An RNA of 207 nucleotides, treated with DMS and 2A3 and read out base by base. Reactivities are given for positions 27 through 156.
RNA sequence: GGGAACGACUCGAGUAGAGUCGAAAAGGAGGUGAUAAGAAUAAAGAAUACUAGCAAUUUGCGGAGUUCGGAGAAACCUCCACGAGGAGUUGACGCUUUGCCAUCUUUACAUAAACCAAAAUAUUCAACAUUCUUCUCUGAAUAACUCCCAACCACAUAACACACUGGAUUUCGAUCCAGUGUGUUAAAAAGAAACAACAACAACAAC
Reactivity to DMS in 0.01 (KOAc 150mM, MgCl2 10mM, bicine 150mM(pH8.5), 24C), signal-to-noise 1, nucleotides 027 to 156: g030g020a000g000g000u000g000a150u000a120a080g020a150a100u010a060a160a200g020a080a110u010a060c040u000a130g030c100a070a170u000u000u020g040c040g040g000a170g060u000u000c090g040g020a200g030a100a100a070c040c000u000c020c020a050c160g010a110g020g000a170g030u000u000g000a050c020g000c160u000u000u010g050c040c050a060u000c020u000u000u000a070c050a220u010a070a070a150c040c010a020a020a060a030u000a080u010u000c000a030a150c080a070u020u000c020u000u000c050u000c060u000g000a150a190u010a040a040c040u000c000c000c050a090a060c050c010a070c090a160
Reactivity to 2A3 in 0.01 (KOAc 150mM, MgCl2 10mM, bicine 150mM(pH8.5), 24C), signal-to-noise 3, nucleotides 027 to 156: g010g020a040g000g000u060g040a210u130a230a060g020a040a020u150a130a150a010g020a060a050u110a160c100u080a070g030c030a050a210u100u130u170g010c070g000g030a040g020u030u050c060g030g010a020g020a080a060a040c010c000u000c010c000a000c050g030a060g020g010a030g010u030u030g060a030c010g020c040u070u030u090g040c040c010a030u020c060u070u170u120a090c040a100u170a110a070a090c050c040a150a070a010a030u150a120u140u160c080a130a040c020a080u060u000c030u070u020c020u000c000u020g050a140a050u100a130a080c020u000c000c000c020a030a020c020c010a050c010a110